[RMDB]
RNA sequence: GGGAACGACUCGAGUAGAGUCGAAAACGCGUCAGAUUCGUCUGACGCGAAAGCAUAGAACAGCGCUAUCAUGUAUUAUAGUUCUAUGCAACUAUAGGGCUAAAACGAUACCGUUCGCGGUAUCGAAGCAUACUCAAGUCUUCGGACUUGAGUAUGCAAAAGAAACAACAACAACAAC
Reactivity to 2A3 in 0.01 (KOAc 150mM, MgCl2 10mM, bicine 150mM(pH8.5), 24C), signal-to-noise 3, nucleotides 027 to 126: c000g000c000g030u000c000a000g000a040u010u030c080g070u010c090u010g010a000c000g010c000g000a000a000a000g010c000a010u020a000g010a020a010c020a040g090c040g010c160u110a140u300c110a110u270g150u130a100u140u190a130u170a100g000u000u000c000u000a010u010g000c000a000a000c010u030a010u120a140g120g040g070c060u160a050a000a000a070c020g000a000u010a000c000c000g020u040u040c250g000c010g070g000u010a010u000c000g000a000a000
Reactivity to DMS in 0.01 (KOAc 150mM, MgCl2 10mM, bicine 150mM(pH8.5), 24C), signal-to-noise 2, nucleotides 027 to 126: c010g010c000g000u000c000a000g020a060u000u030c190g060u000c000u000g000a020c000g010c000g000a010a010a120g020c020a000u010a000g000a030a030c000a090g030c240g010c110u010a120u010c150a070u010g000u000a060u000u020a120u030a110g000u000u000c030u000a030u000g000c010a070a110c150u000a060u010a100g020g010g020c220u000a020a060a070a100c020g000a000u000a000c000c010g000u000u000c250g050c010g010g000u000a000u010c000g010a010a040
Source: RMDB library M2PK50, as collected in RNAgym. Structure probing data (2A3 and DMS) for a 177-nucleotide construct. 2A3 is a SHAPE reagent: it acylates the 2'-hydroxyl of flexible nucleotides of all four kinds. Values cover nucleotides 27 to 126. The reactions ran in a buffer of 150 mM KOAc, 10 mM MgCl2 and 150 mM bicine (pH 8.5), at 24 C. 2A3 adducts were read by reverse transcription with SuperScript II with manganese. Values are in units of 0.01, from 0 to 300, in steps of 10.